[RMDB]
This 177-nucleotide RNA was probed chemically with DMS and 2A3. Reactivities are rounded to 0.1 and cut off at 0 and 3. The DMS profile rests on 1,165 reads.

RNA sequence: GGGAACGACUCGAGUAGAGUCGAAAAGGUGAUCUGGACGGGAAGUAGAUCCAGCGACUGCAUCCGAAGCUUUGAUAAGAGCAACUCCAUCUACGUUGCUCAAGUAGGUGGUAGCAGCAAACACCGAAGCUCCACUCACUUUCGAGUGAGUGGAGCUAAAAGAAACAACAACAACAAC
Reactivity to DMS in 0.01 (KOAc 150mM, MgCl2 10mM, bicine 150mM(pH8.5), 24C), signal-to-noise 1, nucleotides 027 to 126: g000g020u000g000a300u090c010u000g000g000a020c000g000g000g030a120a090g000u000a160g000a190u000c000c000a040g030c150g000a160c000u040g030c000a170u050c070c120g010a110a300g000c000u000u000u010g000a230u070a110a020g000a000g050c000a000a070c020u020c000c030a150u050c180u000a010c090g000u000u000g000c000u000c000a040a120g020u000a000g000g000u160g000g000u000a100g040c000a010g020c040a110a030a140c030a070c000c000g000a260
Reactivity to 2A3 in 0.01 (KOAc 150mM, MgCl2 10mM, bicine 150mM(pH8.5), 24C), signal-to-noise 2, nucleotides 027 to 126: g000g000u080g000a100u040c000u000g020g030a050c120g110g020g290a220a000g040u050a010g000a200u000c000c040a000g150c050g080a040c000u000g040c000a000u080c120c050g090a050a150g050c120u140u090u170g120a130u230a140a040g010a000g000c000a030a030c000u050c100c000a140u050c080u040a000c050g000u040u000g020c080u000c050a000a000g000u030a000g000g100u250g000g020u010a110g000c040a000g000c050a000a000a000c000a000c000c000g000a000